An RNA of 207 nucleotides, treated with 2A3 and DMS and read out base by base. The DMS profile rests on 2,577 reads. For 2A3, 1,731 sequencing reads were counted.

RNA sequence: GGGAACGACUCGAGUAGAGUCGAAAACCUGGUUUAGGGUUCCAGGCUAGCCCUAUCUAUCGGUCGAGAUGCGAGCGCUUAAGCUCAAAUUGGGUGGCUGAGUUAGUGGUGAACGUAUCCCUAUGUUAAAACGGUAGCUGCUUCGGCAGCUACCGAACUAUGUUAAAAUCUUCGGAUUUUAACAUAGAAAAGAAACAACAACAACAAC
Reactivity to 2A3 in 0.01 (KOAc 150mM, MgCl2 10mM, bicine 150mM(pH8.5), 24C), signal-to-noise 1, nucleotides 027 to 156: c000c000u000g000g010u040u080u060a040g000g000g020u020u080c020c000a000g020g050c040u020a010g010c030c000c020u010a020u020c010u010a130u040c030g020g020u000c020g050a030g010a170u020g030c000g030a020g010c040g070c130u300u300a110a090g000c000u000c000a030a060a030u020u040g040g030g030u200g020g020c010u010g010a010g010u010u020a040g010u090g220g000u020g030a070a010c030g040u100a120u120c000c000c010u030a060u110g040u000u090a080a080a020a030c000g000g000u000a000g000c000u010g030c020u060u090c230g090g000c030a010g010c000u010a000c000c000g000a000a000
Reactivity to DMS in 0.01 (KOAc 150mM, MgCl2 10mM, bicine 150mM(pH8.5), 24C), signal-to-noise 1, nucleotides 027 to 156: c010c000u000g010g020u010u000u000a060g020g000g010u010u000c000c030a110g050g000c010u000a300g000c030c000c000u000a010u000c020u000a070u000c020g010g020u000c020g020a140g000a030u000g020c300g000a020g030c000g030c260u000u000a100a180g040c000u000c000a040a170a060u000u000g000g010g020u020g000g000c020u000g000a100g010u000u020a030g020u000g020g010u000g000a050a090c030g010u010a070u000c000c010c020u000a140u000g010u000u010a080a050a080a190c000g020g000u010a020g020c000u020g000c000u000u000c290g040g040c000a000g000c000u000a000c010c000g020a000a020

As a SHAPE reagent, 2A3 marks flexible, mostly unpaired nucleotides at the ribose 2'-OH. 2A3 adducts were read by reverse transcription with SuperScript II with manganese. It was measured as part of the RMDB library M2RFPK.